[RMDB]
RNA sequence: GGGAACGACUCGAGUAGAGUCGAAAAUUGGCAUGGGCCCUAGGAAAAGUUAUCUUUUUUCUUUAACAGUCUGUAACCCUGGAAACGAAUUAUUCGGAGAUAGGGUUUAAUGAUUGGUAGAGCGUCACAGAUUAUCCAUCUUCGGAUGGAUAAUCUGAAAAGAAACAACAACAACAAC
Reactivity to DMS in 0.01 (KOAc 150mM, MgCl2 10mM, bicine 150mM(pH8.5), 24C), signal-to-noise 2, nucleotides 027 to 126: u010u010g000g020c010a050u000g010g020g030c020c000c040u000a060g020g000a060a030a010a060g010u010u010a070u020c000u000u000u000u000u000u000c010u000u000u000a020a030c020a010g000u000c020u000g020u000a020a000c000c000c020u010g010g000a270a070a010c020g010a020a190u000u030a150u020u000c000g000g000a020g010a300u020a000g000g000g000u000u000u000a030a030u000g000a020u000u000g000g010u000a020g010a030g030c210g000u010c080a130

Record summary
The data come from the RNA Mapping Database (RMDB), library RFMREP. The record gives the reactivity of an RNA of 177 nucleotides to DMS. Reactivities are given for positions 27 through 126. The DMS profile rests on 1,162 reads.